[RMDB]
RNA sequence: GGGAACGACUCGAGUAGAGUCGAAAAACACCAAAACUGAAAACGGAAGGCAAUCCUUCCACGACGAUACUUACUUUCCUUUGAUCGUAGUUACUACUGGCAUAGCCACAAAGGAGAACAAACAUGAGCGCGGACACUGACUUCGGUCAGUGUCCAAGCCUAAAGCGGCGUUCGCGCCGCUUUAGGCAAAAGAAACAACAACAACAAC
Reactivity to 2A3 in 0.01 (KOAc 150mM, MgCl2 10mM, bicine 150mM(pH8.5), 24C), signal-to-noise 2, nucleotides 027 to 156: a000c120a170c020c060a080a110a030a080c080u120g040a120a030a000a030c170g000g000a000a000g010g020c140a080a150u300c000c000u010u010c000c000a020c000g020a000c030g010a020u060a130c070u090u010a010c000u030u070u000c010c000u050u040u010g060a130u180c050g020u020a000g070u220u180a030c070u050a010c000u070g000g010c060a180u160a130g050c000c000a000c000a030a020a010g020g010a020g000a090a000c060a050a050a010c040a090u270g020a030g060c180g000c080g040g000a000c000a000c000u000g010a000c000u040u000c060g070g000u000c010a000g000u020g000u000c000c000a000a000
An RNA of 207 nucleotides, treated with 2A3 and read out base by base. It was measured as part of the RMDB library M2RFPK.